[RMDB]
RNA sequence: GGGAACGACUCGAGUAGAGUCGAAAAGACUCAAAUCUAAUAUACCAACAGGUCAUGAUUACUGGCUUGGGAAUCAUCGAGGCAUGGAAUAAUCCACCGAUCAAUUGUAAUCUGACUGAACUCACUCGUUCAAGCAGCGGUUCGCCGCUGCUUGAACAAAAGAAACAACAACAACAAC
Reactivity to 2A3 in 0.01 (KOAc 150mM, MgCl2 10mM, bicine 150mM(pH8.5), 24C), signal-to-noise 2, nucleotides 027 to 126: g000a000c040u000c110a100a050a000u020c070u070a130a150u110a090u050a230c080c080a070a020c010a210g000g100u030c000a000u300g020a000u040u070a030c070u040g010g110c010u010u090g020g090g050a000a030u080c070a030u140c000g050a100g000g030c000a050u000g020g010a070a060u110a110a070u110c000c000a000c000c110g000a010u080c060a070a000u160u190g040u010a000a000u020c000u000g010a000c010u060g000a040a000c020u000c070a020c000u060c000